[RMDB]
RNA sequence: GGGAACGACUCGAGUAGAGUCGAAAACACCCCAGUGAGAAUGCCCUCUAGGUUAUUAAAACUAAGAGGAGCUGGCAUCAAGCACACACCCUGUAGCUCACGACGCCUUGCUUAACCACACCCCACGGGAAACAGCAGUGACAAAAAUUAAGCCAUAGUGUAGAGAUAAGUUCGCUUAUCUCUACACAAAAGAAACAACAACAACAAC
Reactivity to DMS in 0.01 (KOAc 150mM, MgCl2 10mM, bicine 150mM(pH8.5), 24C), signal-to-noise 1, nucleotides 027 to 156: c040a140c000c000c000c000a080g040u000g020a130g020a220a090u000g000c010c000c000u000c030u000a220g030g000u020u020a170u010u000a120a080a030a060c020u000a130a190g020a110g020g010a100g020c000u000g010g000c000a060u000c090a020a110g000c150a040c000a080c010a130c060c020c030u000g000u000a040g020c000u000c050a100c040g020a070c020g040c020c000u000u020g000c030u000u000a130a150c000c030a080c030a050c020c030c020c000a160c080g030g000g000a220a060a140c080a060g000c000a050g020u000g020a130c040a030a010a020a040a150u000u000a030a120g000c050c000a020u000a130
Reactivity to 2A3 in 0.01 (KOAc 150mM, MgCl2 10mM, bicine 150mM(pH8.5), 24C), signal-to-noise 3, nucleotides 027 to 156: c070a060c000c020c020c000a040g050u070g030a060g030a070a080u100g010c000c000c000u000c000u010a050g010g040u040u040a120u140u240a200a220a070a020c040u080a130a040g020a050g030g080a080g010c010u020g000g020c010a020u020c050a100a010g020c040a010c010a010c000a010c050c000c000u020g030u060a040g010c020u050c010a040c030g070a010c030g040c020c000u020u070g010c010u090u070a070a030c020c010a020c030a040c020c040c000c000a010c030g020g010g000a090a070a000c030a020g000c020a040g010u020g080a050c080a030a110a040a030a020u100u160a050a020g040c030c020a060u090a070
The record gives the reactivity of an RNA of 207 nucleotides to DMS and 2A3. For 2A3, 1,360 sequencing reads were counted. For 2A3 the reverse transcriptase was SuperScript II with manganese. It was measured as part of the RMDB library PDB130. The DMS profile rests on 1,511 reads.